[RMDB]
RNA sequence: GGGAACGACUCGAGUAGAGUCGAAAAAGCUACACCACAAGGAGUGGAUUGUGCGGCUUAAUUUGACUCAACGCGAGGAAACUUACCAGGGCCAAGUAUUGUGUAGAAACGAGCAAUACAGGAGUGGGUGUUAGUAUAUGUUCGCAUAUACUAACACAAAAGAAACAACAACAACAAC
Reactivity to 2A3 in 0.01 (KOAc 150mM, MgCl2 10mM, bicine 150mM(pH8.5), 24C), signal-to-noise 9, nucleotides 027 to 126: a000g000c020u030a010c010a010c000c020a020c040a090a150g300g040a200g160u040g010g060a200u200u300g040u050g120c230g020g000c020u020u030a050a050u090u020u040g000a000c000u000c020a020a000c010g000c000g020a010g010g030a090a040a010c030u070u080a070c020c010a020g060g120g000c020c020a120a030g010u000a010u010u020g020u030g060u130a070g200a130a160a040c100g020a050g040c010a000a010u010a010c010a030g040g050a100g060u130g030g120
Reactivity to DMS in 0.01 (KOAc 150mM, MgCl2 10mM, bicine 150mM(pH8.5), 24C), signal-to-noise 6, nucleotides 027 to 126: a030g020c010u000a050c020a080c020c020a020c020a210a200g010g020a280g020u000g000g000a150u000u000g020u010g010c140g010g000c010u000u000a070a110u000u000u010g010a030c010u000c010a110a020c020g000c010g010a030g010g010a070a090a080c080u010u000a270c010c020a140g020g000g000c030c030a070a140g000u010a020u000u000g010u000g000u000a100g010a060a080a070c210g010a120g000c010a020a010u000a020c010a130g000g010a100g020u010g010g010
Notes: An RNA of 177 nucleotides, treated with 2A3 and DMS and read out base by base. Reactivities are given for positions 27 through 126. High DMS reactivity at an A or C suggests that its Watson-Crick edge is free. As a SHAPE reagent, 2A3 marks flexible, mostly unpaired nucleotides at the ribose 2'-OH. Conditions: 150 mM KOAc, 10 mM MgCl2 and 150 mM bicine (pH 8.5), 24 C.